Conditions: 150 mM KOAc, 10 mM MgCl2 and 150 mM bicine (pH 8.5), 24 C. The record gives the reactivity of an RNA of 177 nucleotides to 2A3 and DMS. DMS adducts were read by reverse transcription with MarathonRT.
RNA sequence: GGGAACGACUCGAGUAGAGUCGAAAAAUGCUAGACGUCAUGCUAGGUACAGUACGUGUAGUAGCUAGUACUAUGUCAUGGACUCUAGGGUACGUACCUAGAGGUACCGCUCGUCUACAUGCGAUCGGAUAGGAGUGUGCUUCGGCACACUCCUAUCAAAAGAAACAACAACAACAAC
Reactivity to 2A3 in 0.01 (KOAc 150mM, MgCl2 10mM, bicine 150mM(pH8.5), 24C), signal-to-noise 2, nucleotides 027 to 126: a000u030g010c030u000a020g000a020c030g020u070c010a030u050g040c020u040a070g030g010u000a020c010a010g050u030a020c030g090u290g150u250a060g000u030a030g170c070u070a040g010u010a010c030u040a030u130g090u110c010a030u030g020g020a030c010u000c000u000a010g000g000g000u120a030c130g040u070a060c010c000u020a000g030a020g030g010u050a090c020c060g080c050u050c030g010u000c030u030a020c020a050u100g050c030g070a090u140c090g140
Reactivity to DMS in 0.01 (KOAc 150mM, MgCl2 10mM, bicine 150mM(pH8.5), 24C), signal-to-noise 3, nucleotides 027 to 126: a040u010g010c250u000a000g010a030c020g000u030c150a020u000g010c040u010a180g000g010u000a010c000a060g020u010a050c040g040u030g030u030a090g000u000a040g070c030u000a110g030u000a010c000u000a110u000g000u000c050a070u020g030g000a190c020u010c000u010a000g010g010g020u000a120c300g030u040a140c000c000u000a030g000a030g000g000u000a050c030c140g010c170u010c020g000u000c050u000a050c040a030u000g010c140g000a100u000c090g000